Description
An RNA of 177 nucleotides, treated with 2A3 and DMS and read out base by base. The RNA was probed in 150 mM KOAc, 10 mM MgCl2 and 150 mM bicine (pH 8.5) at 24 C. The 2A3 profile rests on 6,553 reads.
RNA sequence: GGGAACGACUCGAGUAGAGUCGAAAAGAUAUGGAUUAUGUAGGAGAGGUAUGGACAACUCGGUAUAUUCGGAAACGAAUAUACCGAGGGGACAUACUACCCACCUCCUACCGCUAAUCCUAAGUCAUCGAGAUAUAAUCUUCGGAUUAUAUCUCGAAAAAGAAACAACAACAACAAC
Reactivity to 2A3 in 0.01 (KOAc 150mM, MgCl2 10mM, bicine 150mM(pH8.5), 24C), signal-to-noise 2, nucleotides 027 to 126: g070a040u120a070u300g000g010a000u000u010a060u240g010u000a010g030g000a010g010a010g000g020u020a000u050g020g040a100c000a210a150c100u000c000g000g020u000a010u010a000u000u010c000g070g040a060a090a080c020g000a000a010u010a000u010a020c000c000g010a000g000g000g000g000a000c000a010u010a010c000u060a080c040c060c010a090c010c000u000c000c000u000a010c010c000g010c030u000a000a000u010c000c000u010a280a040g110u030c030a070
Reactivity to DMS in 0.01 (KOAc 150mM, MgCl2 10mM, bicine 150mM(pH8.5), 24C), signal-to-noise 4, nucleotides 027 to 126: g010a040u000a300u010g000g010a010u010u000a000u020g000u000a000g010g000a030g020a140g010g000u000a000u000g000g000a180c020a050a120c000u000c000g030g000u000a000u000a010u000u000c000g010g000a150a100a230c010g010a010a000u000a010u000a000c000c000g020a000g010g010g000g010a100c010a010u000a010c030u000a050c040c100c170a300c140c010u000c010c000u000a010c000c010g010c010u000a000a000u000c000c000u010a070a150g020u020c030a090